[RMDB]
RNA sequence: GGGAACGACUCGAGUAGAGUCGAAAAGGGCCCGCCAUCUGAAGUGUUCCACCCUCCGGGCCAGGAGGCUCUGGUCGAACUCCGAGAGGAUCGAUUCGCGUCCGUAGAGGCGUACGAAACCCGGCCGUAGUACAAAAGGAUUCGUCCUUUUGUACUAAAAAGAAACAACAACAACAAC
Reactivity to DMS in 0.01 (KOAc 150mM, MgCl2 10mM, bicine 150mM(pH8.5), 24C), signal-to-noise 8, nucleotides 027 to 126: g010g000g020c040c030c060g020c070c030a070u010c040u010g000a070a120g010u000g010u000u010c030c040a100c090c010c010u000c040c040g020g020g010c050c040a130g000g000a130g010g010c060u010c040u000g010g010u000c050g010a050a090c120u000c010c020g010a170g000a160g000g000a100u000c030g010a120u000u010c080g020c050g010u000c020c050g020u010a100g000a140g010g000c010g010u000a050c060g000a040a100a140c040c030c030g010g010c080c050g000
Reactivity to 2A3 in 0.01 (KOAc 150mM, MgCl2 10mM, bicine 150mM(pH8.5), 24C), signal-to-noise 4, nucleotides 027 to 126: g010g020g020c030c020c000g020c040c020a140u080c080u090g060a140a050g040u030g040u130u040c020c020a100c060c000c010u000c020c010g040g030g010c040c000a020g000g020a030g060g000c020u000c030u080g040g000u020c020g020a060a050c040u000c000c020g050a050g000a050g100g000a060u060c030g050a060u080u070c030g010c020g030u000c010c010g010u060a050g030a150g050g000c010g010u040a040c030g020a060a040a050c020c010c000g020g010c030c020g030